[RMDB]
RNA sequence: GGGAACGACUCGAGUAGAGUCGAAAACGAAGAGGGAUCCCCGGGGAAACCUACUCGAGCGAGGCGGAGAUCGAGCGCCAGUUCGUGCGCGGCGACCUGAAGUUGCUUCGGCUUCUUCUUGUUCGCGUGGUGCGUGGAACGGCUCCUUCUUCACUCGGUUUACCUUGAAGUUCGCUUCAAGGUAAACAAAAGAAACAACAACAACAAC
Reactivity to 2A3 in 0.01 (KOAc 150mM, MgCl2 10mM, bicine 150mM(pH8.5), 24C), signal-to-noise 2, nucleotides 027 to 156: c050g060a150a070g050a050g100g060g030a130u130c040c040c030c040g070g000g000g030a070a090a060c030c010u030a080c020u030c020g030a020g000c000g010a020g020g040c240g010g000a000g000a000u020c010g000a000g000c020g090c100c010a040g020u000u000c010g020u040g010c020g000c030g000g050c000g010a000c000c000u010g000a010a010g000u020u010g010c000u040u090c300g090g000c000u000u000c000u010u020c000u020u030g120u240u030c030g000c080g070u210g140g060u030g010c010g000u020g000g010a010a000c000g000g000c010u000c000c000u000u010c010u000u010c000a000c000u000c000g000
An RNA of 207 nucleotides, treated with 2A3 and read out base by base.